Source information
Chemical mapping of a 177-nucleotide RNA with DMS and 2A3. As a SHAPE reagent, 2A3 marks flexible, mostly unpaired nucleotides at the ribose 2'-OH. 2A3 adducts were read by reverse transcription with SuperScript II with manganese.

RNA sequence: GGGAACGACUCGAGUAGAGUCGAAAACCGGCGCGGCGGCGCUGAGCGGCAACUCAGCGGCGGAGCCAUCCAGCGAAGGAAGCAUCUGGUCCGUUGCUAAUCCUUCGGAUGUAAUCAUUGGCGGCGCCGCCGAAGACAAGUUCGCUUGUCUUCGGCGAAAAGAAACAACAACAACAAC
Reactivity to DMS in 0.01 (KOAc 150mM, MgCl2 10mM, bicine 150mM(pH8.5), 24C), signal-to-noise 3, nucleotides 027 to 126: c020c020g030g020c050g010c030g010g020c010g030g010c010g050c010u010g030a010g000c050g000g000c300a140a250c040u000c000a010g030c050g050g010c020g030g040a250g000c020c000a010u030c170c020a140g000c040g000a010a010g000g000a080a010g000c030a050u030c050u000g010g010u040c150c040g020u000u020g000c000u000a130a110u010c000c000u000u000c010g000g000a110u010g010u000a070a150u050c090a110u010u020g000g000c040g000g000c010g010c010
Reactivity to 2A3 in 0.01 (KOAc 150mM, MgCl2 10mM, bicine 150mM(pH8.5), 24C), signal-to-noise 5, nucleotides 027 to 126: c000c010g030g000c030g000c020g110g000c010g020g060c000g000c020u000g010a010g040c070g210g020c060a040a160c040u000c010a010g010c010g040g070c000g010g020a030g000c010c000a020u010c020c010a030g060c030g030a000a000g010g000a010a030g010c000a020u020c050u190g150g080u120c080c060g000u020u000g000c000u050a100a080u020c000c000u000u000c000g000g000a040u040g030u120a080a080u130c110a100u050u080g040g010c050g010g000c000g000c000